[RMDB]
RNA sequence: GGGAACGACUCGAGUAGAGUCGAAAAGAAAGAAAGAAGUUUCCAUCACGUCAAUUGCUAUCAGAGCAACGCAUGAUGUAUAAUAACUAAGCGUCGCUCUGAUACCAAAUUGAUGCAAUGGAAACAAGUGCGUCGGGAUAUUCGUAUCCCGACGCACAAAAGAAACAACAACAACAAC
Reactivity to 2A3 in 0.01 (KOAc 150mM, MgCl2 10mM, bicine 150mM(pH8.5), 24C), signal-to-noise 1, nucleotides 027 to 126: g040a010a000a020g070a000a210a000g170a160a000g000u000u020u000c010c000a010u070c010a030c060g000u000c000a000a000u000u030g000c030u000a000u000c000a000g000a000g070c000a030a030c000g010c000a300u020g060a290u040g060u000a070u090a300a000u160a070a000c000u000a030a030g040c000g000u000c000g000c000u020c000u000g000a000u000a000c000c000a000a250a210u000u000g000a000u000g000c040a020a000u060g000g000a000a010a000c000a000a000
The record gives the reactivity of an RNA of 177 nucleotides to 2A3. The data come from the RNA Mapping Database (RMDB), library RFM100. 2A3 adducts were read by reverse transcription with SuperScript II with manganese. Values cover nucleotides 27 to 126.